[RMDB]
An RNA of 170 nucleotides, treated with DMS and 2A3 and read out base by base.

RNA sequence: GGGAACGACUCGAGUAGAGUCGAAAAUUCGAUCCGGACCGGCUCAUCUCGGCAAAAGGCGGCAGUCCUCAGUGCUCUUACUCUUUCCUAUAAAGAGGAGACUGCUGGACUCGCCGCCCGAGCCCGACUACACGCUUGUUCGCAAGCGUGAAAAGAAACAACAACAACAAC
Reactivity to DMS in 0.01 (KOAc 150mM, MgCl2 10mM, bicine 150mM(pH8.5), 24C), signal-to-noise 8, nucleotides 027 to 129: u030u020c050g030a130u040c080c010g000g010a130c060c010g000g030c050u000c010a130u020c090u010c080g000g000c040a020a040a200a120g010g010c030g050g010c060a050g020u020c010c030u010c020a020g020u090g060c060u020c030u030u080a300c030u040c000u000u000u000c270c190u030a120u040a080a000a010g010a040g030g020a010g000a070c010u020g040c200u040g000g030a010c010u020c080g070c030c050g000c020c010c020g000a190g020c030c030c080g000a050c170u050a100
Reactivity to 2A3 in 0.01 (KOAc 150mM, MgCl2 10mM, bicine 150mM(pH8.5), 24C), signal-to-noise 7, nucleotides 027 to 129: u050u030c020g010a040u020c020c030g020g020a030c010c000g020g000c000u000c020a110u060c040u020c040g010g000c020a080a100a030a050g010g020c000g000g000c000a000g000u010c000c000u000c000a030g010u100g260c020u000c000u070u170a240c010u020c000u010u040u060c060c080u180a130u240a300a030a000g000a000g010g000a010g000a010c010u020g040c050u020g000g000a000c020u010c030g000c000c000g000c000c000c000g000a010g010c000c010c000g040a020c020u070a030
For DMS, 21,644 sequencing reads were counted. Conditions: 150 mM KOAc, 10 mM MgCl2 and 150 mM bicine (pH 8.5), 24 C.